This 177-nucleotide RNA was probed chemically with 2A3 and DMS. For DMS the reverse transcriptase was MarathonRT. The RNA was probed in 150 mM KOAc, 10 mM MgCl2 and 150 mM bicine (pH 8.5) at 24 C. For 2A3, 2,970 sequencing reads were counted.
RNA sequence: GGGAACGACUCGAGUAGAGUCGAAAACAUACGGACUUCGGUCCGUAUGAAAGAACCUCAAAUUGACGCAAACUUCCGCGUCAUCGCGAGGAAGCGAGCAAAAAAUCGAGGUGUUCGCACCUCGAAACGUUCAAUGUAGCUUCGGCUACAUUGAACGAAAAGAAACAACAACAACAAC
Reactivity to 2A3 in 0.01 (KOAc 150mM, MgCl2 10mM, bicine 150mM(pH8.5), 24C), signal-to-noise 2, nucleotides 027 to 126: c010a000u010a000c010g000g000a010c010u050u070c240g080g000u000c000c010g000u000a000u000g000a000a000a000g060a040a070c010c000u050c000a050a070a060u060u100g030a000c050g000c000a040a120a190c140u200u050c070c050g010c000g020u060c050a050u050c020g020c030g010a040g010g040a040a000g000c040g040a020g000c000a020a030a070a060a030a050u050c010g000a000g020g020u010g030u030u050c210g020c060a000c010c000u000c000g000a000a010a010
Reactivity to DMS in 0.01 (KOAc 150mM, MgCl2 10mM, bicine 150mM(pH8.5), 24C), signal-to-noise 2, nucleotides 027 to 126: c020a000u000a000c010g000g000a000c000u000u010c180g060g070u000c000c000g040u000a010u000g020a000a040a100g000a120a200c000c000u000c110a040a200a090u010u010g010a060c200g000c000a060a240a150c130u010u000c070c040g010c000g030u000c090a060u010c160g020c140g010a030g040g040a040a040g000c090g000a210g030c010a000a020a030a050a090a080u000c020g000a010g020g000u000g020u000u010c130g040c000a020c000c000u010c000g000a000a020a060